[RMDB]
RNA sequence: GGGAACGACUCGAGUAGAGUCGAAAAAACUCUUUUUGUGUGCUUUUCAUAGGUGCCUGAUGAUUAAUCUCUGUUUGUUGGGUGCGGCCCAUUAAAUAGUCCAAGGAGACAGAAAAAUAGUCUGCUAUUCAACGCAGUAAUUCGUUACUGCGUUGAAAAAAGAAACAACAACAACAAC
Reactivity to DMS in 0.01 (KOAc 150mM, MgCl2 10mM, bicine 150mM(pH8.5), 24C), signal-to-noise 2, nucleotides 027 to 126: a030a030c090u000c010u000u000u000u000u000g000u020g010u020g000c020u000u000u010u060c100a070u000a080g000g000u010g040c030c020u010g010a090u000g000a060u000u020a050a090u010c050u000c040u020g000u010u000u010g010u000u000g000g010g000u010g020c080g030g000c020c020c050a030u000u000a040a050a090u010a040g020u000c030c020a110a080g000g020a080g010a060c040a040g000a010a060a060a030a040u010a040g000u000c000u000g000c080u000a160
Reactivity to 2A3 in 0.01 (KOAc 150mM, MgCl2 10mM, bicine 150mM(pH8.5), 24C), signal-to-noise 1, nucleotides 027 to 126: a020a020c150u220c040u060u140u000u060u180g000u030g000u000g130c050u100u060u000u000c080a040u100a150g060g050u000g110c000c000u000g000a000u000g000a000u020u220a110a110u000c060u000c000u020g210u010u180u110g150u040u050g000g140g000u000g000c030g040g000c000c010c010a000u080u030a000a020a120u060a010g000u000c000c000a050a030g110g000a030g080a000c060a000g200a000a000a000a000a000u020a050g000u000c000u000g010c050u060a140